[RMDB]
RNA sequence: GGGAACGACUCGAGUAGAGUCGAAAAAUGGGACACAAUCUUGCCUUCCAUGCCCCAGCCACUCUCUCACUGCGGAAUCACCAAGGAGGGAAAGAUGAGUCCCUGAGCAAUCAGGAAACGGUGUGCUCCCGGAUCCAGGCCAGGUAGUAGGCCACAAGUCAUUUAGUAUAUUCGUAUACUAAAUGACAAAAGAAACAACAACAACAAC
Reactivity to DMS in 0.01 (KOAc 150mM, MgCl2 10mM, bicine 150mM(pH8.5), 24C), signal-to-noise 3, nucleotides 027 to 156: a070u000g000g040g020a030c030a040c110a210a080u000c030u000u000g000c040c000u000u000c010c000a200u000g010c020c020c030c010a120g000c020c010a050c040u000c070u000c070u000c090a090c010u010g020c060g060g000a240a060u010c050a100c170c050a100a140g000g000a070g020g000g020a030a040a020g020a030u000g000a230g000u000c020c010c010u000g000a020g020c170a080a120u000c040a040g010g010a050a030a090c050g000g020u000g020u000g000c100u000c030c000c000g020g000a120u010c060c010a070g020g020c020c000a090g010g030u000a130g000u000a140g020g010c020c010a040c070a050a300
Reactivity to 2A3 in 0.01 (KOAc 150mM, MgCl2 10mM, bicine 150mM(pH8.5), 24C), signal-to-noise 5, nucleotides 027 to 156: a000u070g000g000g010a010c010a010c040a050a110u010c000u020u040g080c000c000u000u010c010c000a040u070g030c000c000c000c000a020g020c080c030a160c050u170c010u030c010u060c070a030c050u030g010c060g070g040a070a090u170c040a080c160c050a140a090g010g000a000g010g010g000a040a010a000g000a010u030g010a010g030u030c000c000c010u010g000a010g010c040a040a120u110c050a060g100g000a090a050a050c040g020g040u090g030u070g080c010u030c000c010c000g020g030a020u010c030c010a030g010g000c000c010a020g090g050u090a080g100u050a060g080g020c010c030a040c060a040a000